Structure probing data (2A3) for a 207-nucleotide construct.
RNA sequence: GGGAACGACUCGAGUAGAGUCGAAAAACGACGCCAGUAUUAACGCAACGCCAAAUACUCCGGGGUGGGUCGAGGACGCAAAUAGCCCCAUAAAUGUUUCCGGAUCUCAAGAAGCUACAAUAACACUUGAUGGAACAUAUAAUAUAGUUCUCGUCCAGCUAAGCUGUUGUUUCGACAACAGCUUAGCAAAAGAAACAACAACAACAAC
Reactivity to 2A3 in 0.01 (KOAc 150mM, MgCl2 10mM, bicine 150mM(pH8.5), 24C), signal-to-noise 1, nucleotides 027 to 156: a000c100g070a010c060g130c040c000a000g090u040a100u110u040a090a030c000g000c060a000a110c120g000c010c040a000a130a060u150a050c010u010c100c260g000g000g000g000u080g020g000g000u000c000g070a000g040g000a000c040g000c080a060a160a000u180a040g080c110c000c000c000a030u160a060a140a010u000g040u130u000u000c010c000g020g090a190u000c060u040c190a110a060g030a070a000g140c020u170a110c110a170a250u130a170a090c070a040c110u000u050g020a020u090g060g040a030a000c020a000u070a010u040a060a070u230a010u100a040g000u010u000c000u010c010g000u040c040c000a000
Source: RMDB library OK3TST, as collected in RNAgym. As a SHAPE reagent, 2A3 marks flexible, mostly unpaired nucleotides at the ribose 2'-OH. Conditions: 150 mM KOAc, 10 mM MgCl2 and 150 mM bicine (pH 8.5), 24 C.